[RMDB]
RNA sequence: GGGAACGACUCGAGUAGAGUCGAAAAGAUAUGGAGCAUACAUCAGACGUGGACUCGGAAACGAGUCCUCGUCGACGACGUAUGAACUACUCCUAAGUCAAAAGGAACGCGGUUCGCCGCGUUCCAACCAUUGGGAAAGGUUCGCCUUUCCCAAUGGAAAAGAAACAACAACAACAAC
Reactivity to 2A3 in 0.01 (KOAc 150mM, MgCl2 10mM, bicine 150mM(pH8.5), 24C), signal-to-noise 2, nucleotides 027 to 126: g020a010u050a040u180g010g000a020g010c010a000u010a000c000a030u030c060a050g010a010c020g000u010g000g000a000c000u010c010g030g020a060a060a030c000g000a000g000u000c010c010u010c000g000u000c000g020a010c070g020a000c020g010u000a000u020g020a050a060c030u180a070c000u040c010c000u040a090a010g060u020c020a050a030a100a040g010g000a020a000c000g000c050g000g020u080u110c290g060c070c000g020c040g000u010u010c000c000a030a010
Reactivity to DMS in 0.01 (KOAc 150mM, MgCl2 10mM, bicine 150mM(pH8.5), 24C), signal-to-noise 4, nucleotides 027 to 126: g010a030u000a260u000g000g000a000g000c000a010u000a000c000a050u000c000a120g010a000c000g010u010g000g000a010c000u010c000g010g000a050a070a130c000g000a010g000u010c000c000u000c000g030u000c010g000a050c300g000a010c060g010u000a020u000g010a070a050c180u000a300c000u000c000c000u000a040a190g010u000c020a070a060a130a140g000g010a000a020c000g030c010g000g010u000u000c240g010c010c000g000c010g010u010u000c000c000a030a050

Background
Structure probing data (2A3 and DMS) for a 177-nucleotide construct. The DMS profile rests on 3,536 reads. The data come from the RNA Mapping Database (RMDB), library TTRDEL. Values cover nucleotides 27 to 126.